Conditions: 150 mM KOAc, 10 mM MgCl2 and 150 mM bicine (pH 8.5), 24 C. Structure probing data (DMS and 2A3) for a 177-nucleotide construct. 2A3 adducts were read by reverse transcription with SuperScript II with manganese. The 2A3 profile rests on 7,439 reads. For DMS the reverse transcriptase was MarathonRT.

RNA sequence: GGGAACGACUCGAGUAGAGUCGAAAAGCUGGCGGCCGAGUACCCCAGCGUGUUCCGCUCGCUGCUGGGGAUUUCGUGGAUGUGGUUCUUUGGCGCGGUCUUCCUGUCGCAGUUCCCUGCGUUCGCCCUAGUGACUAUAGUUCGCUAUAGUCACUAGAAAAGAAACAACAACAACAAC
Reactivity to DMS in 0.01 (KOAc 150mM, MgCl2 10mM, bicine 150mM(pH8.5), 24C), signal-to-noise 5, nucleotides 027 to 126: g010c040u000g010g030c070g020g020c050c030g000a080g010u000a160c010c010c010c010a020g010c020g010u000g010u000u000c070c070g010c070u000c060g000c030u010g020c010u000g000g000g010g010a100u000u000u000c060g020u010g010g000a070u000g020u000g010g000u000u000c050u000u000u000g020g010c050g010c050g010g010u010c040u000u000c020c020u000g010u000c030g010c060a100g000u000u000c020c020c010u010g010c050g010u000u000c040g010c070c090
Reactivity to 2A3 in 0.01 (KOAc 150mM, MgCl2 10mM, bicine 150mM(pH8.5), 24C), signal-to-noise 4, nucleotides 027 to 126: g030c030u040g040g080c030g030g000c030c020g020a020g060u150a150c010c000c000c000a000g000c030g000u010g010u120u020c040c020g020c050u060c020g020c030u120g010c010u010g000g020g040g030a060u050u150u060c060g020u060g060g050a100u060g060u080g080g080u080u050c040u080u110u110g040g000c050g000c020g070g020u000c010u050u040c010c000u020g030u040c030g000c040a010g000u030u030c020c000c010u010g030c020g040u010u030c050g090c010c000